Chemical mapping of a 207-nucleotide RNA with 2A3. Conditions: 150 mM KOAc, 10 mM MgCl2 and 150 mM bicine (pH 8.5), 24 C. For 2A3, 527 sequencing reads were counted. For 2A3 the reverse transcriptase was SuperScript II with manganese. Source: RMDB library OK3TST, as collected in RNAgym.
RNA sequence: GGGAACGACUCGAGUAGAGUCGAAAAUAUGAGACUCUCGGUACAUUAAUUACAUUCAGUUCCGACUCAGUCUUACCUAUGAUAGCUAACGUUCUUUCGAUUAUCCUCACUCGUUUAGAAACAUCAAUUCAAAUGCAAAGUCAGAUAUUAGAUGUUAUGAGUAGGCAUGGUUCGCCAUGCCUACUCAAAAAGAAACAACAACAACAAC
Reactivity to 2A3 in 0.01 (KOAc 150mM, MgCl2 10mM, bicine 150mM(pH8.5), 24C), signal-to-noise 2, nucleotides 027 to 156: u300a120u210g060a030g000a010c000u000c000u000c010g000g000u010a010c000a040u140u300a290a090u250u050a080c120a130u140u130c200a040g000u100u000c000c000g030a030c000u010c040a000g010u000c000u000u050a080c040c000u120a140u260g070a130u070a100g010c040u080a110a070c010g010u090u040c020u090u030u050c050g090a070u000u100a010u120c010c000u000c020a070c010u040c000g030u000u050u070a100g050a040a090a040c020a040u050c010a070a060u140u000c050a070a070a070u010g110c180a270a080a100g050u150c000a000g000a070u120a030u270u110a000g010a050u010g010u090u000a090